[RMDB]
RNA sequence: GGGAACGACUCGAGUAGAGUCGAAAAAAAAAAAGAUAUGGACUUAGAUCAUGCAGGCACGACGAAGCUCUUCGGAAACGAAGAGCAGAGUGCCUGAACUACAUGGCUAAGUCCUAAGUCAAAAAAAGAUACGAUACUUGUUCGCAAGUAUCGUAUCAAAAGAAACAACAACAACAAC
Reactivity to DMS in 0.01 (KOAc 150mM, MgCl2 10mM, bicine 150mM(pH8.5), 24C), signal-to-noise 2, nucleotides 027 to 126: a010a000a050a050a020a110a110g000a030u010a300u010g020g000a010c000u000u000a010g000a130u010c010a010u000g000c030a020g000g000c030a030c000g050a160c200g000a060a060g000c000u010c000u000u000c000g020g000a100a050a210c000g010a040a000g000a010g010c000a010g000a090g010u010g000c000c000u000g000a020a010c050u010a300c010a000u010g010g020c010u000a000a000g000u000c010c000u000a020a090g000u010c010a000a000a060a080a040a070a200
Reactivity to 2A3 in 0.01 (KOAc 150mM, MgCl2 10mM, bicine 150mM(pH8.5), 24C), signal-to-noise 1, nucleotides 027 to 126: a000a030a060a000a030a000a020g090a030u130a010u150g030g010a020c000u010u000a020g100a230u300c010a010u020g000c030a000g010g030c020a010c030g300a100c080g060a300a000g000c020u000c000u010u010c010g000g040a060a000a030c020g000a000a010g000a010g000c000a000g010a000g000u010g010c000c020u010g010a000a010c020u060a020c010a010u010g030g030c030u000a010a000g000u010c000c010u000a010a000g000u000c000a010a060a000a060a060a060a070